[RMDB]
This 177-nucleotide RNA was probed chemically with DMS and 2A3. The RNA was probed in 150 mM KOAc, 10 mM MgCl2 and 150 mM bicine (pH 8.5) at 24 C.

RNA sequence: GGGAACGACUCGAGUAGAGUCGAAAAUUCAUACGGCUGCGCGAGCGCGAGAUGCGCGGGGUGCUGGUCGAUGCAGAAAUACGGCGUCUCGAACAAUUCCUGCAGCAGCACGAUCUGCGCGCCGCGAAUAAAUUAAAUCCUUCGGGAUUUAAUUUAUAAAAGAAACAACAACAACAAC
Reactivity to DMS in 0.01 (KOAc 150mM, MgCl2 10mM, bicine 150mM(pH8.5), 24C), signal-to-noise 3, nucleotides 027 to 126: u010u010c060a120u010a140c020g000g010c010u010g060c000g030c020g010a150g000c020g010c010g010a140g000a120u010g000c010g020c000g040g010g000g000u000g010c010u000g000g010u000c140g010a110u010g020c030a020g010a040a030a030u000a100c140g000g010c130g010u000c130u000c090g010a090a070c070a110a070u000u000c000c000u000g010c010a040g000c010a020g000c010a030c010g010a120u000c040u010g030c000g020c010g010c000c000g020c040g010a100
Reactivity to 2A3 in 0.01 (KOAc 150mM, MgCl2 10mM, bicine 150mM(pH8.5), 24C), signal-to-noise 1, nucleotides 027 to 126: u040u010c050a020u070a140c020g020g030c040u180g000c100g000c040g030a130g040c000g000c020g110a100g030a200u250g030c000g000c000g030g040g030g010u000g000c010u040g020g050u090c030g070a020u040g000c000a020g120a090a070a010u190a130c070g020g050c050g070u070c120u090c150g100a140a050c050a100a060u000u020c010c020u010g000c000a030g040c000a010g020c000a010c000g010a230u000c050u150g020c010g010c000g000c000c000g030c000g050a000